[RMDB]
RNA sequence: GGGAACGACUCGAGUAGAGUCGAAAAUGCAAGUAGUGCUAUUGUUGGAAUCACCGUACCUAUUUAGGUUUACGCUCCAAGAUCGGUGGAUAGCAGCCCUAUCAAUAUCUAGGAGUACUGUGCUAUGAAAACGGUAUUGGCUUCGGCCAAUACCGAACUCUUAAUGGUGGUUCGCCACCAUUAAGAGAAAAGAAACAACAACAACAAC
Reactivity to 2A3 in 0.01 (KOAc 150mM, MgCl2 10mM, bicine 150mM(pH8.5), 24C), signal-to-noise 4, nucleotides 027 to 156: u120g010c040a010a060g010u010a000g030u050g040c040u060a050u060u110g110u080u120g050g080a090a100u220c010a010c010c000g010u040a030c000c010u060a130u230u210u270a040g000g020u000u070u100a050c050g010c030u000c010c020a030a050g000a040u040c060g010g140u050g050g030a030u010a000g010c050a010g020c030c000c000u010a040u050c030a070a080u020a030u210c000u020a040g000g030a010g050u020a010c010u040g080u000g080c010u050a070u240g110a040a060a030a040c010g000g000u000a000u000u010g010g010c020u000u050c140g100g020c000c000a000a000u000a000c000c000g000a000a000
Reactivity to DMS in 0.01 (KOAc 150mM, MgCl2 10mM, bicine 150mM(pH8.5), 24C), signal-to-noise 1, nucleotides 027 to 156: u000g030c080a080a110g010u000a060g040u010g030c020u000a080u000u010g010u010u000g000g020a080a080u010c000a020c060c000g010u000a040c040c030u010a170u000u010u010a010g030g000u010u000u020a130c060g010c040u000c020c020a070a170g010a050u010c120g010g100u010g000g010a050u000a070g020c000a160g010c110c130c020u000a090u000c030a150a080u000a070u010c120u000a130g000g010a140g010u010a060c080u000g000u000g010c040u020a070u000g000a070a100a090a170c020g010g020u000a000u000u020g010g010c030u000u010c300g010g040c000c000a000a020u000a010c010c000g010a000a030